[RMDB]
Structure probing data (DMS and 2A3) for a 177-nucleotide construct. The 2A3 profile rests on 1,732 reads. The RNA was probed in 150 mM KOAc, 10 mM MgCl2 and 150 mM bicine (pH 8.5) at 24 C. For 2A3 the reverse transcriptase was SuperScript II with manganese. It was measured as part of the RMDB library RFM100.
RNA sequence: GGGAACGACUCGAGUAGAGUCGAAAAACAAAAGUAUCCGCACCCUGCUAACGGGUUACUCAAGCAGGAGGGCGAAAGUGGGUAUAAGUGAGGUGCUAGACCCCCAAAAAGUCCCCUCUAAAGGGACACUGUAUCGCACAUUCGUGUGCGAUACAGUAAAAGAAACAACAACAACAAC
Reactivity to DMS in 0.01 (KOAc 150mM, MgCl2 10mM, bicine 150mM(pH8.5), 24C), signal-to-noise 2, nucleotides 027 to 126: a110c100a020a050a060a120g000u030a100u030c000c000g000c030a100c100c020c000u020g000c000u010a050a140c220g010g020g000u000u000a090c140u040c030a090a030g000c030a030g000g000a060g020g000g000c070g000a040a100a010g040u010g000g000g050u020a040u010a100a120g040u000g000a040g010g020u020g000c030u000a050g000a250c050c010c010c000c070a060a050a000a040a070g040u000c000c000c000c000u000c230u030a050a060a080g020g000g030a020c000
Reactivity to 2A3 in 0.01 (KOAc 150mM, MgCl2 10mM, bicine 150mM(pH8.5), 24C), signal-to-noise 2, nucleotides 027 to 126: a000c070a000a070a000a000g040u050a040u020c010c010g050c000a060c000c010c000u010g060c000u070a090a060c030g050g090g060u010u190a070c050u080c060a070a030g050c000a000g060g100a090g100g030g000c040g050a100a050a000g040u020g000g000g060u030a090u010a150a070g030u020g100a010g040g010u020g000c020u010a030g060a120c010c000c000c010c040a120a000a040a000a000g000u000c000c000c010c010u030c030u140a040a060a010g000g000g000a000c000